An RNA of 207 nucleotides, treated with DMS and 2A3 and read out base by base. The reactions ran in a buffer of 150 mM KOAc, 10 mM MgCl2 and 150 mM bicine (pH 8.5), at 24 C. The DMS profile rests on 5,530 reads.
[RMDB]
RNA sequence: GGGAACGACUCGAGUAGAGUCGAAAAAGUCAGAGGGCGCUACCAUGCAAACUAGGGCUGGCUACUCUUGCACAGAAUCACAUCUCGAUAAUUGUCAGUGCAAGAAGGACAAUGAUACCAUUUAAUGAAAACGUUUACCUGUUCGCAGGUAAACGAAGUAUUCGUUUAACUUCGGUUAAACGAAUACAAAAGAAACAACAACAACAAC
Reactivity to DMS in 0.01 (KOAc 150mM, MgCl2 10mM, bicine 150mM(pH8.5), 24C), signal-to-noise 3, nucleotides 027 to 156: a110g000u000c040a070g000a130g000g000g020c130g020c060u000a080c040c030a100u010g020c040a130a090a190c140u000a110g030g000g030c040u000g020g010c030u000a100c040u000c020u010u000g010c000a000c010a100g010a070a130u000c040a070c070a110u010c070u010c130g000a220u000a050a100u000u010g020u020c040a220g040u000g000c010a030a020g010a050a110g030g000a070c040a030a040u000g000a120u000a080c040c020a100u000u000u000a100a160u000g000a070a080a090a210c000g020u010u000u000a010c000c010u000g010u010u010c270g080c050a010g000g010u000a000a000a000c000g020a010a080
Reactivity to 2A3 in 0.01 (KOAc 150mM, MgCl2 10mM, bicine 150mM(pH8.5), 24C), signal-to-noise 8, nucleotides 027 to 156: a010g010u020c010a010g020a030g040g020g020c030g000c030u060a170c070c040a080u180g010c020a040a050a040c030u080a030g030g060g000c010u010g030g000c010u060a060c020u010c000u000u000g000c000a000c000a020g150a080a070u150c030a060c030a200u060c070u080c100g100a080u100a160a080u160u060g030u060c050a020g000u000g000c000a000a000g010a010a020g030g010a000c000a050a050u090g060a070u090a130c030c040a060u110u110u180a150a130u150g060a050a040a010a010c010g000u000u000u000a000c000c000u010g010u040u060c220g000c080a000g000g000u000a000a000a000c000g000a010a000